[RMDB]
RNA sequence: GGGAACGACUCGAGUAGAGUCGAAAAUAUCGACAUCACAUCACACCAUCGGGAAACGUCUUGCGUUUCUUCGGUGCUACCGAGCAGGGACACAGUAUCUGUGUCAAUGUGUUUGGGCAGAGGAGCUACUUUUACUGUGAGUAUCAGGAUGGCGACCGGAGCCGAAACAAUUCGUUGUUUCGGCUCCAAAAGAAACAACAACAACAAC
Reactivity to 2A3 in 0.01 (KOAc 150mM, MgCl2 10mM, bicine 150mM(pH8.5), 24C), signal-to-noise 1, nucleotides 027 to 156: u160a000u020c000g060a000c040a000u010c000a000c000a040u020c010a000c040a020c000c000a000u000c010g020g000g120a000a000a000c040g010u030c090u080u300g060c020g000u000u000u000c080u110u080c000g000g000u060g000c000u000a000c000c000g030a000g120c000a000g000g080g000a000c000a000c000a000g070u280a110u150c040u020g020u020g000u120c000a030a090u080g010u000g050u080u010u010g010g050g020c000a000g000a140g100g010a000g020c040u180a120c050u090u200u110u100a030c000u030g060u090g020a020g040u100a050u170c000a010g050g040a030u020g000g010c010g050a010c070c070

The record gives the reactivity of an RNA of 207 nucleotides to 2A3. The reactions ran in a buffer of 150 mM KOAc, 10 mM MgCl2 and 150 mM bicine (pH 8.5), at 24 C. The data come from the RNA Mapping Database (RMDB), library OK3TST. 2A3 adducts were read by reverse transcription with SuperScript II with manganese.